This 177-nucleotide RNA was probed chemically with 2A3 and DMS. Reactivities are given for positions 27 through 126. For DMS the reverse transcriptase was MarathonRT.

RNA sequence: GGGAACGACUCGAGUAGAGUCGAAAAGAUAUGGAACGGACCCACGAGGGCCCACCUGAUGACCUCGGAAACGAGCAAGGGUGGGUCUUCGUGCCGUUCCUAAGUCAAAGGCAUGUUCGCAUGCCAAGAGAAACGGUAUGUUCGCAUACCGUUUCUCAAAAGAAACAACAACAACAAC
Reactivity to 2A3 in 0.01 (KOAc 150mM, MgCl2 10mM, bicine 150mM(pH8.5), 24C), signal-to-noise 1, nucleotides 027 to 126: g020a000u070a070u210g010g000a000a000c020g020g010a040c200c210c010a000c010g000a000g020g010g000c000c030c020a000c010c010u150g050a300u170g050a110c020c020u010c010g010g010a120a070a010c010g000a010g020c030a070a180g000g030g010u000g010g000g000u000c000u020u000c000g020u000g000c000c000g000u000u010c000c000u000a000a020g030u000c040a050a070a100g000g000c030a010u040g030u030u210c300g000c130a000u000g020c000c020a000a000
Reactivity to DMS in 0.01 (KOAc 150mM, MgCl2 10mM, bicine 150mM(pH8.5), 24C), signal-to-noise 3, nucleotides 027 to 126: g010a070u020a300u000g000g010a000a020c010g000g010a300c170c300c080a000c000g010a030g000g010g010c000c010c010a000c000c000u000g010a090u020g000a070c300c000u000c010g000g010a120a090a160c010g000a000g000c030a050a170g010g000g010u000g000g000g010u000c000u010u000c000g020u000g010c010c000g020u020u000c000c000u010a000a040g020u010c050a050a090a100g010g020c020a010u000g000u010u030c070g000c020a010u010g000c000c000a060a080